An RNA of 207 nucleotides, treated with 2A3 and read out base by base. The 2A3 profile rests on 1,253 reads. For 2A3 the reverse transcriptase was SuperScript II with manganese.
[RMDB]
RNA sequence: GGGAACGACUCGAGUAGAGUCGAAAACGCUGGGUCCCGCUUUUGACGGCUGUACUGAAGCGCGCACGGUAUGAAGCCGAUAAGCCGGACCUGUGCUGAAGCGCGCACGGCAACCGAAAGGUGCGAAAAGCUUACCGACGUUCGCGUCGGUAAGCAAGAAAUUAGUGGUCUUCGGACCACUAAUUUCAAAAGAAACAACAACAACAAC
Reactivity to 2A3 in 0.01 (KOAc 150mM, MgCl2 10mM, bicine 150mM(pH8.5), 24C), signal-to-noise 2, nucleotides 027 to 156: c030g020c010u040g000g010g000u010c000c020c000g020c060u130u090u130u300g300a060c010g000g020c020u030g010u000a010c010u070g030a260a050g000c000g000c000g010c010a010c040g000g000u000a010u030g290a190a090g000c020c000g130a180u090a300a000g000c000c050g000g010a030c000c020u040g050u030g040c010u040g060a100a040g000c000g020c000g030c010a000c020g070g000c020a120a150c040c000g010a100a040a010g000g040u030g060c020g040a030a230a000a000g000c010u000u000a000c000c000g020a020c010g010u040u110c180g000c000g150u020c000g000g020u010a010a000g020c000a000a030